[RMDB]
RNA sequence: GGGAACGACUCGAGUAGAGUCGAAAAAUAGACUUCGGUCUAUAAGGGGCGUACUACUUUGAGGGUGCGCCGACGAUAAGACUUUCCCAAAUAGGAAAGUCUUUUGACGUCGCGCACCUACCCACCAAAGUAUCGCGAUUUACUGUUUCGACAGUAAUACACAAAUGAAUUUCGAUUCAUUUGUGUAAAAAGAAACAACAACAACAAC
Reactivity to DMS in 0.01 (KOAc 150mM, MgCl2 10mM, bicine 150mM(pH8.5), 24C), signal-to-noise 3, nucleotides 027 to 156: a030u000a020g000a030c010u000u000c270g090g040u000c010u000a020u010a140a080g000g020g060g000c030g030u010a070c120u000a020c010u000u010u000g020a150g030g000g000u000g010c000g050c020c010g020a010c000g030a190u000a030a030g020a060c000u000u000u000c000c000c010a070a200a190u000a050g010g010a020a000a020g010u000c000u010u000u000u000g000a150c050g000u000c000g040c010g000c020a020c010c010u000a000c050c020c020a300c110c010a000a020a020g000u010a020u010c010g010c020g000a130u000u000u010a010c010u020g020u000u000u010c110g000a090c060a040g010u010a040a190
Reactivity to 2A3 in 0.01 (KOAc 150mM, MgCl2 10mM, bicine 150mM(pH8.5), 24C), signal-to-noise 3, nucleotides 027 to 156: a000u010a010g000a000c020u040u050c300g070g000u000c030u000a050u060a080a140g050g020g030g000c020g040u050a120c020u000a000c000u050u020u020g010a020g000g030g000u000g000c000g000c070c010g000a000c000g000a000u060a050a000g000a000c000u000u000u030c020c020c020a200a290a160u250a080g000g010a000a000a000g000u020c000u010u010u020u020g090a040c010g000u000c000g000c000g010c030a000c000c000u010a010c000c000c020a010c010c000a010a000a010g000u020a040u300c020g000c010g020a010u020u070u050a020c000u000g000u030u170u090c130g030a020c010a000g010u030a010a050